[RMDB]
RNA sequence: GGGAACGACUCGAGUAGAGUCGAAAAGGGGUCCUCCAAUAUCUUGGAUUUAGUAGCGAGGUAUACUGAAGCCUCCACGGUAUACUACCCACCGCUACUUGUCAGAUAUUGAAGAGGACGGAGGCACCCAAAACCCAUAAGGUUCGCCUUAUGGGAACCUAUAGAAAGUCUUCGGACUUUCUAUAGGAAAAGAAACAACAACAACAAC
Reactivity to 2A3 in 0.01 (KOAc 150mM, MgCl2 10mM, bicine 150mM(pH8.5), 24C), signal-to-noise 1, nucleotides 027 to 156: g020g010g000g030u000c000c030u030c000c010a010a090u010a010u030c050u230u300g120g010a070u300u300u250a000g000u020a000g020c000g010a010g020g020u010a010u000a010c000u020g070a140a000g000c000c000u000c000c000a010c010g000g000u000a000u000a000c010u030a050c070c120c050a040c000c010g000c010u000a000c000u000u010g020u020c060a050g000a000u000a010u010u020g010a120a060g000a000g010g000a000c000g000g000a000g010g040c000a010c000c000c000a030a090a060a060c000c000c010a000u000a000a010g090g020u020u190c240g090c050c000u010u010a000u000g010g020g010a010a040